RNA sequence: GGGAACGACUCGAGUAGAGUCGAAAAGAGCUGGCAGAAAGUAUCCGGGCGCAUGGGGUAUUGCAGCCGCUGCUGGUGCGUUCGGUGGAUGGGCAGUACGAGAUUGUUGCAGGGGAGCGUCGUUGGCUCCCCUAAGGGAAUUCGUUCCCUUAGGGGAAAAAGAAACAACAACAACAAC
Reactivity to 2A3 in 0.01 (KOAc 150mM, MgCl2 10mM, bicine 150mM(pH8.5), 24C), signal-to-noise 5, nucleotides 027 to 126: g040a000g000c040u040g030g020c050a020g070a080a110a000g060u060a070u080c010c020g020g030g010c030g000c020a020u060g090g030g090g000u090a070u080u230g030c020a000g060c040c100g050c050u060g010c010u060g050g020u020g010c010g030u040u060c010g000g010u030g040g030a070u050g000g040g020c020a010g010u040a040c060g010a020g020a160u080u140g050u070u070g010c020a020g000g010g020g020a020g020c020g010u040c010g020u060u040g040g000c020
Reactivity to DMS in 0.01 (KOAc 150mM, MgCl2 10mM, bicine 150mM(pH8.5), 24C), signal-to-noise 9, nucleotides 027 to 126: g010a110g010c030u000g010g010c040a080g000a110a080a120g010u010a080u000c020c020g010g010g010c030g010c030a010u000g020g010g010g010u000a040u000u010g010c050a090g010c070c090g010c060u000g000c020u000g010g020u000g010c020g010u000u000c030g010g010u010g000g010a080u010g000g010g000c040a050g010u000a060c110g010a100g000a100u000u000g000u000u000g010c060a070g000g000g000g000a050g010c040g020u000c060g010u000u000g010g010c090